This 177-nucleotide RNA was probed chemically with 2A3 and DMS. DMS adducts were read by reverse transcription with MarathonRT. The reactions ran in a buffer of 150 mM KOAc, 10 mM MgCl2 and 150 mM bicine (pH 8.5), at 24 C.
[RMDB]
RNA sequence: GGGAACGACUCGAGUAGAGUCGAAAAUAAUUUUGAUCCACGAGCAUCUAAAGCACCUUUUACAAGAAUUAAAGCUGUUGUAUGUAAUCCUAAAGCAAUUGCAUGAUGCACUAAGAAAUCACCAGGAUCAUAAUAUCAAGUUCGCUUGAUAUUAUGAAAAAGAAACAACAACAACAAC
Reactivity to 2A3 in 0.01 (KOAc 150mM, MgCl2 10mM, bicine 150mM(pH8.5), 24C), signal-to-noise 3, nucleotides 027 to 126: u030a020a000u040u080u100u190g010a000u040c020c000a010c080g020a020g020c010a000u000c020u170a140a070a010g000c000a020c010c000u040u080u040u070a080c080a070a060g090a150a070u190u100a100a050a010g020c000u010g030u130u030g030u090a050u040g000u000a020a060u080c040c030u070a100a060a000g040c040a020a030u090u020g000c000a020u040g010a030u040g050c020a010c040u010a040a030g060a050a140a030u040c020a010c060c010a000g080g010a020
Reactivity to DMS in 0.01 (KOAc 150mM, MgCl2 10mM, bicine 150mM(pH8.5), 24C), signal-to-noise 6, nucleotides 027 to 126: u010a100a090u000u000u000u000g010a090u000c030c030a090c180g000a100g020c020a020u010c030u010a060a100a120g010c020a030c070c020u000u000u000u000a080c120a050a090g010a090a090u010u000a040a070a070g020c090u000g010u000u000g010u010a050u000g010u000a030a040u000c030c030u000a060a080a120g000c130a070a050u000u010g010c050a050u000g010a050u000g000c020a050c070u010a060a060g010a050a070a060u000c050a060c060c050a110g000g010a130